Structure probing data (DMS and 2A3) for a 207-nucleotide construct. Source: RMDB library VIROID, as collected in RNAgym. For DMS, 3,449 sequencing reads were counted. For 2A3, 2,449 sequencing reads were counted.

[RMDB]
RNA sequence: GGGAACGACUCGAGUAGAGUCGAAAACGGUAGGUUCCGAGGGGGUGUGAUCCAGGUACCGCCGUAGAAACUGGAUUACGACGUCUACCCGGGAUUCAAACCCGGUCCCCUCCAGAAGUGAAUUCUGGAAGAAGAGUCUGCGCUUAGCGCACUGAUGCUAUCAUUAUGAGUUCGCUCAUAAUGAUAGAAAAGAAACAACAACAACAAC
Reactivity to DMS in 0.01 (KOAc 150mM, MgCl2 10mM, bicine 150mM(pH8.5), 24C), signal-to-noise 2, nucleotides 027 to 156: c030g000g020u000a130g050g020u000u000c020c010g000a110g020g000g000g010g010u010g020u000g020a030u000c000c010a030g020g020u000a130c050c030g000c060c240g000u000a080g010a070a120a210c040u010g010g010a120u000u000a030c010g020a030c000g010u000c010u000a040c020c010c010g000g030g000a050u000u000c070a120a200a150c050c030c010g000g010u000c010c010c000c070u010c010c010a000g010a040a020g000u030g010a130a300u000u000c000u000g000g000a050a100g020a110a160g000a140g020u000c000u010g030c000g010c040u000u000a220g020c030g030c010a060c030u010g020a250u000g010
Reactivity to 2A3 in 0.01 (KOAc 150mM, MgCl2 10mM, bicine 150mM(pH8.5), 24C), signal-to-noise 4, nucleotides 027 to 156: c000g010g010u040a050g010g050u010u040c050c010g030a300g020g030g000g000g000u080g010u030g030a010u010c010c000a000g030g020u070a050c060c080g090c070c040g040u070a050g110a030a210a020c040u030g010g010a020u020u030a030c140g040a020c020g180u020c030u120a280c000c000c000g000g010g000a090u300u300c060a090a090a080c010c000c000g010g030u030c010c000c000c000u010c000c000a010g000a020a010g030u180g120a170a270u030u000c000u020g030g030a030a050g040a040a010g020a030g030u040c070u040g000c000g000c050u100u230a070g010c000g000c020a010c070u070g020a040u140g020
Conditions: 150 mM KOAc, 10 mM MgCl2 and 150 mM bicine (pH 8.5), 24 C.